An RNA of 177 nucleotides, treated with 2A3 and DMS and read out base by base.
Source: RMDB library OK1LIB, as collected in RNAgym.
For 2A3 the reverse transcriptase was SuperScript II with manganese.
[RMDB]
RNA sequence: GGGAACGACUCGAGUAGAGUCGAAAAUGGAAAUGACGCCGAGAUCAUGAAUGCUAUUCCUAAUAGCACGACCUUGGCCUCCCACAGAGUGAAAGGCAAUAAAGUGGACAUGACUCUCUGCCAAGCACAGUUUUAGGAGUUUCGACUCCUAAAACUGAAAAGAAACAACAACAACAAC
Reactivity to 2A3 in 0.01 (KOAc 150mM, MgCl2 10mM, bicine 150mM(pH8.5), 24C), signal-to-noise 8, nucleotides 027 to 126: u150g080g020a000a070a120u150g040a040c070g010c000c030g000a010g000a030u010c010a030u050g300a300a000u030g050c000u020a020u120u210c080c080u130a100a050u000a020g000c010a000c010g010a030c000c000u020u020g020g000c030c000u030c000c020c000a020c050a010g110a010g040u100g080a090a080a060g050g000c060a080a100u160a250a160a050g120u110g070g050a060c070a150u120g040a080c010u000c000u000c010u050g010c000c020a030a010g100c060a020
Reactivity to DMS in 0.01 (KOAc 150mM, MgCl2 10mM, bicine 150mM(pH8.5), 24C), signal-to-noise 4, nucleotides 027 to 126: u030g000g000a090a120a040u050g000a120c140g020c030c030g020a050g030a040u000c010a110u000g020a150a100u010g000c000u000a000u000u010c140c180u060a010a050u010a010g000c010a060c010g020a030c030c010u010u000g000g000c010c080u000c010c010c040a180c100a080g000a100g010u000g000a110a070a120g020g000c020a100a060u050a050a090a160g010u030g010g010a150c130a040u010g010a140c090u000c020u010c020u010g000c000c050a110a150g010c150a160
The RNA was probed in 150 mM KOAc, 10 mM MgCl2 and 150 mM bicine (pH 8.5) at 24 C.